[RMDB]
RNA sequence: GGGAACGACUCGAGUAGAGUCGAAAAGAUAUGGAGCCUUUUAGCUUUUGACGGCUGAUCGGAAACGAUACAGCCGAUAAGCUGGAGGCUCCUAAGUCAAACAGCUUGUAGUUCGCUACAAGCUGAAGAUAUGAUUACGGUUCGCCGUAAUCAUAUCAAAAGAAACAACAACAACAAC
Reactivity to 2A3 in 0.01 (KOAc 150mM, MgCl2 10mM, bicine 150mM(pH8.5), 24C), signal-to-noise 3, nucleotides 027 to 126: g010a000u020a010u120g010g010a020g000c010c000u050u040u140u300a020g000c110u120u160u270u300g160a070c020g000g000c000u010g000a000u000c000g010g000a050a040a020c010g000a010u230a090c000a000g010c000c000g000a000u020a010a030g000c020u000g000g010a000g000g010c000u000c000c000u000a000a000g000u000c010a020a070a130c000a000g000c010u010u010g010u000a020g000u050u080c300g010c100u000a000c000a000a000g000c000u000g000a000a000
Reactivity to DMS in 0.01 (KOAc 150mM, MgCl2 10mM, bicine 150mM(pH8.5), 24C), signal-to-noise 4, nucleotides 027 to 126: g000a020u000a300u010g000g000a010g010c000c000u000u000u000u010a010g010c000u000u010u010u010g010a220c050g010g010c000u000g010a060u000c000g010g000a100a050a090c000g010a010u000a120c000a000g000c000c000g020a030u000a010a030g020c000u000g000g010a020g000g010c010u000c000c000u000a010a030g000u010c020a120a140a300c020a010g000c000u000u010g010u000a020g010u000u020c270g020c010u000a000c000a010a010g000c000u010g000a030a060

Conditions: 150 mM KOAc, 10 mM MgCl2 and 150 mM bicine (pH 8.5), 24 C. An RNA of 177 nucleotides, treated with 2A3 and DMS and read out base by base. It was measured as part of the RMDB library TTRDEL. The DMS profile rests on 5,620 reads. DMS adducts were read by reverse transcription with MarathonRT.